[RMDB]
RNA sequence: GGGAACGACUCGAGUAGAGUCGAAAAGUUGCCCGAGAAGAGAUCACACAGAUGAGACACAAGGAGCGAUGUCUCAUCACUUGGUUUUCGACAAGAGACGAGUCGUUCCCAAAAUCGCUCCAAUGAAGAACUGUGUUCAAUUCGUUGAACACAGUUCAAAAGAAACAACAACAACAAC
Reactivity to DMS in 0.01 (KOAc 150mM, MgCl2 10mM, bicine 150mM(pH8.5), 24C), signal-to-noise 1, nucleotides 027 to 126: g070u040u000g010c240c030c010g020a110g040a180a180g000a090g010a130u010c130a070c200a130c210a200g010a000u000g000a010g000a010c000a030c080a070a030g010g000a020g040c000g020a100u000g000u010c000u000c000a000u000c010a120c030u000u000g000g010u010u000u020u000c010g020a010c030a080a090g010a130g010a050c030g000a010g000u000c000g040u010u000c010c000c010a010a000a010a010u000c010g020c000u000c010c010a200a100u000g000a200a170